[RMDB]
Conditions: 150 mM KOAc, 10 mM MgCl2 and 150 mM bicine (pH 8.5), 24 C. Chemical mapping of a 177-nucleotide RNA with 2A3 and DMS. For DMS the reverse transcriptase was MarathonRT.
RNA sequence: GGGAACGACUCGAGUAGAGUCGAAAACGCUUGCGGCCCGGGCCGGCACGGUUGCCGUGAUGGUGAUCACCGCCAUGAUCGUCUAUUUCGCGCUCGCUUUCGGACUUGGCGGGGCCAAUACAGGCAACGCACGGCAUAUAUUCGUAUAUGCCGUGCGAAAAGAAACAACAACAACAAC
Reactivity to 2A3 in 0.01 (KOAc 150mM, MgCl2 10mM, bicine 150mM(pH8.5), 24C), signal-to-noise 1, nucleotides 027 to 126: c030g010c000u030u100g040c040g060g060c040c020c000g000g160g050c010c000g000g010c120a000c030g080g000u060u050g040c000c010g010u050g030a060u050g010g030u030g010a070u080c040a030c090c030g010c000c000a020u080g030a140u070c010g020u030c060u090a190u060u140u050c050g020c000g020c030u050c030g030c000u070u160u110c040g100g010a050c040u040u110g030g000c010g040g000g000g000c010c000a040a000u110a030c040a030g020g030c010a010a010
Reactivity to DMS in 0.01 (KOAc 150mM, MgCl2 10mM, bicine 150mM(pH8.5), 24C), signal-to-noise 1, nucleotides 027 to 126: c130g040c060u020u010g020c070g010g040c000c040c010g000g040g030c040c070g020g030c100a120c150g020g000u010u000g030c010c000g020u000g020a080u010g010g020u000g000a060u000c050a150c050c050g000c060c030a090u000g010a070u020c030g000u000c120u000a120u010u000u000c080g000c030g000c080u020c140g020c100u000u010u000c050g030g020a050c020u010u000g000g000c020g020g010g020g000c000c000a040a140u000a080c050a060g000g000c050a050a140